[RMDB]
RNA sequence: GGGAACGACUCGAGUAGAGUCGAAAAACGGCCGCCACGCGUUCAAAGUAUCUAGGUAUUCAAUUCAGUGUAUUGAGGUCGUAUGAGAAUGGUAUUUCAAGUUGAUACACAACUCACUGGACUUGGAGCCGCCUUUUUAAUUCGUUAAAAAGGCGGCAAAAGAAACAACAACAACAAC
Reactivity to 2A3 in 0.01 (KOAc 150mM, MgCl2 10mM, bicine 150mM(pH8.5), 24C), signal-to-noise 2, nucleotides 027 to 126: a000c010g060g020c010c030g060c060c000a040c020g050c020g050u030u110c100a170a140a080g030u000a120u060c060u180a030g010g090u120a120u040u160c060a000a030u020u010c000a060g020u000g000u110a060u030u120g060a100g020g020u010c060g060u050a000u040g080a020g000a040a020u060g150g060u100a110u050u050u140c040a060a020g010u100u040g010a020u060a080c000a040c000a120a050c010u010c000a020c010u030g000g010a010c000u020u020g050g000a000
Reactivity to DMS in 0.01 (KOAc 150mM, MgCl2 10mM, bicine 150mM(pH8.5), 24C), signal-to-noise 1, nucleotides 027 to 126: a180c030g060g070c000c010g000c060c010a080c200g000c000g020u030u000c170a060a100a060g000u010a020u000c130u050a000g020g000u020a090u040u000c000a030a000u000u010c060a020g000u040g050u000a060u030u000g000a250g000g020u020c060g000u030a100u000g000a230g010a000a080u000g040g000u000a130u020u000u000c000a020a090g000u030u000g020a010u000a010c020a160c050a000a070c110u000c000a000c000u000g000g000a010c170u060u010g000g000a050